The record gives the reactivity of an RNA of 177 nucleotides to DMS and 2A3. 2A3 adducts were read by reverse transcription with SuperScript II with manganese. Conditions: 150 mM KOAc, 10 mM MgCl2 and 150 mM bicine (pH 8.5), 24 C. The 2A3 profile rests on 6,791 reads. DMS adducts were read by reverse transcription with MarathonRT.
[RMDB]
RNA sequence: GGGAACGACUCGAGUAGAGUCGAAAAUUGACAUAUCAAUGCCUAAUUCUUGGCUAACACAAGUGAUCAAUUCAUGUAUAUUUUGCGAUAAAUCAUGGUAUUCAAAGGUAAUUGAAGAUGCUGUAUGCACCAUCCAAUGUUUCGACAUUGGAUGGUGAAAAGAAACAACAACAACAAC
Reactivity to DMS in 0.01 (KOAc 150mM, MgCl2 10mM, bicine 150mM(pH8.5), 24C), signal-to-noise 4, nucleotides 027 to 126: u020u010g000a130c100a060u000a070u000c030a020a020u000g010c010c000u010a090a180u040u010c020u000u000g000g020c240u030a080a080c260a170c040a030a040g000u030g000a060u010c200a030a020u020u000c020a010u000g000u010a080u000a040u010u000u020u060g010c190g040a020u000a030a090a090u010c030a000u000g000g000u020a040u010u010c070a070a090a020g000g000u040a070a090u010u010g010a020a060g000a070u000g000c020u000g040u010a120u010g040
Reactivity to 2A3 in 0.01 (KOAc 150mM, MgCl2 10mM, bicine 150mM(pH8.5), 24C), signal-to-noise 7, nucleotides 027 to 126: u110u110g060a020c030a030u080a040u060c030a040a010u040g000c000c010u110a130a120u170u090c020u040u040g070g060c100u150a240a020c070a010c020a190a010g020u030g080a090u140c070a040a010u100u050c020a020u010g080u080a050u020a040u100u070u070u130g090c100g040a070u070a070a060a030u090c010a010u030g050g000u090a100u130u080c070a110a040a050g070g000u110a300a160u020u010g040a050a050g040a100u030g000c050u060g050u130a060u140g050